[RMDB]
RNA sequence: GGGAACGACUCGAGUAGAGUCGAAAACACGACAAAGCCAAGACGUACCUGCAGACGCUCGGCACCGAGAUCCUGAUCAACGGGGUCAGGUGGCAGUACAGGCUCGGCGCCAACAACGUCCCCGAAUGGUGGGCCGGCGAUGUCGUCUACUACAACCGUGUGUCUAAGUAUUCGUACUUAGACACACAAAAGAAACAACAACAACAAC
Reactivity to 2A3 in 0.01 (KOAc 150mM, MgCl2 10mM, bicine 150mM(pH8.5), 24C), signal-to-noise 4, nucleotides 027 to 156: c040a000c000g000a000c010a000a020a000g010c020c020a070a040g070a040c080g100u050a060c010c040u050g050c080a040g020a090c060g020c040u090c130g060g030c010a000c000c000g040a040g010a080u020c000c000u040g030a110u120c060a050a210c120g030g090g050g050u010c000a010g000g020u030g070g020c020a030g020u090a060c020a070g040g020c020u020c010g040g020c030g010c030c020a060a050c060a020a040c050g040u030c000c020c010c020g170a190a140u160g050g000u080g050g020g000c030c050g000g000c000g010a000u030g000u000c010g010u020c010u040a080c020u030a060c010a050a050c060c060
Reactivity to DMS in 0.01 (KOAc 150mM, MgCl2 10mM, bicine 150mM(pH8.5), 24C), signal-to-noise 1, nucleotides 027 to 156: c090a060c070g050a080c040a050a130a300g020c010c000a060a100g060a090c070g020u000a050c010c020u000g000c060a120g000a090c000g030c060u010c220g000g000c050a030c030c030g010a100g000a100u020c000c010u000g000a140u000c110a180a260c150g000g030g010g020u000c040a000g030g030u000g000g010c040a170g040u000a180c040a070g000g030c000u000c020g040g020c030g000c000c030a030a270c040a060a030c030g020u000c000c010c000c000g000a090a090u010g030g150u000g040g020g020c040c030g110g010c020g000a300u000g000u000c000g030u000c060u010a120c030u000a060c080a050a000c010c020

Chemical mapping of a 207-nucleotide RNA with 2A3 and DMS.
The 2A3 profile rests on 3,013 reads.
The reactions ran in a buffer of 150 mM KOAc, 10 mM MgCl2 and 150 mM bicine (pH 8.5), at 24 C.
For DMS, 1,385 sequencing reads were counted.
For DMS the reverse transcriptase was MarathonRT.
2A3 adducts were read by reverse transcription with SuperScript II with manganese.